[RMDB]
RNA sequence: GGGAACGACUCGAGUAGAGUCGAAAAGAUAUGGAGUCCGGAGCUUUUGACGGUGUAUCGGAAACGAUACGCCGAUAAGCUCCCGACUCCUAAGUCAAACGCAUAAUCACUUCGGUGAUUAUGCGAAGCUGAUAGAUGAGUUCGCUCAUCUAUCAGCAAAAGAAACAACAACAACAAC
Reactivity to 2A3 in 0.01 (KOAc 150mM, MgCl2 10mM, bicine 150mM(pH8.5), 24C), signal-to-noise 2, nucleotides 027 to 126: g000a010u020a030u090g000g020a010g010u040c020c020g000g000a010g000c050u180u300u300u300g120a050c010g000g000u000g000u010a010u010c010g000g000a010a030a010c010g000a010u000a000c000g000c010c000g000a010u020a010a050g000c000u000c010c000c010g010a010c000u000c000c000u000a020a000g020u000c020a080a010a050c010g000c000a020u000a010a000u010c030a000c020u070u080c300g120g010u010g000a000u020u020a010u020g000c000g000a000a000
Reactivity to DMS in 0.01 (KOAc 150mM, MgCl2 10mM, bicine 150mM(pH8.5), 24C), signal-to-noise 1, nucleotides 027 to 126: g000a020u000a110u000g000g000a010g020u010c000c300g000g010a030g010c000u000u000u030u000g000a170c030g010g010u010g010u000a000u000c000g010g000a030a010a100c010g030a030u000a000c000g000c000c000g000a010u010a020a040g000c000u000c000c000c140g000a000c000u010c000c000u000a000a010g010u000c010a080a150a290c010g000c010a040u000a020a000u000c030a010c000u000u000c180g020g010u000g000a020u000u000a000u000g000c000g000a000a020